RNA sequence: GGGAACGACUCGAGUAGAGUCGAAAACCCGAGCCGUCCAAUGCUGUAACCCAAUACAGGUCCACUGAUAAGGUGGGUGGCGGCAAAUAACGCCAUACGAUGAGUAGGGGCGUUAUGUUGAAUACCGUCCCAAUAAAUGUUUCGACAUUUAUUGGGAAAAAGAAACAACAACAACAAC
Reactivity to 2A3 in 0.01 (KOAc 150mM, MgCl2 10mM, bicine 150mM(pH8.5), 24C), signal-to-noise 3, nucleotides 027 to 126: c000c000c000g000a030g010c000c000g000u020c000c000a100a090u160g000c000u000g000u030a050a060c000c020c010a020a020u010a020c000a010g000g000u000c000c000a000c000u050g060a220u230a300a020g010g010u000g000g010g000u000g000g020c000g000g000c000a000a000a000u000a000a010c000g000c000c010a000u000a010c010g050a070u240g030a040g000u000a000g020g060g000g010c000g000u000u010a000u000g010u010u300g120a050a080u100a090c030c040g060
Reactivity to DMS in 0.01 (KOAc 150mM, MgCl2 10mM, bicine 150mM(pH8.5), 24C), signal-to-noise 9, nucleotides 027 to 126: c000c000c000g010a010g000c010c000g020u000c000c000a070a050u020g010c000u000g010u000a010a030c300c100c300a220a160u000a010c000a010g010g000u000c000c010a020c000u010g000a160u040a090a150g000g010u010g000g000g010u010g020g010c000g000g000c000a020a030a020u000a010a000c000g000c000c000a030u000a010c010g010a130u030g000a300g000u000a010g000g000g000g000c000g010u000u000a000u000g010u010u010g000a090a090u010a110c260c290g000
Notes
Source: RMDB libraries RFM100 and RFMREP, as collected in RNAgym. This 177-nucleotide RNA was probed chemically with 2A3 and DMS. Values cover nucleotides 27 to 126. Conditions: 150 mM KOAc, 10 mM MgCl2 and 150 mM bicine (pH 8.5), 24 C.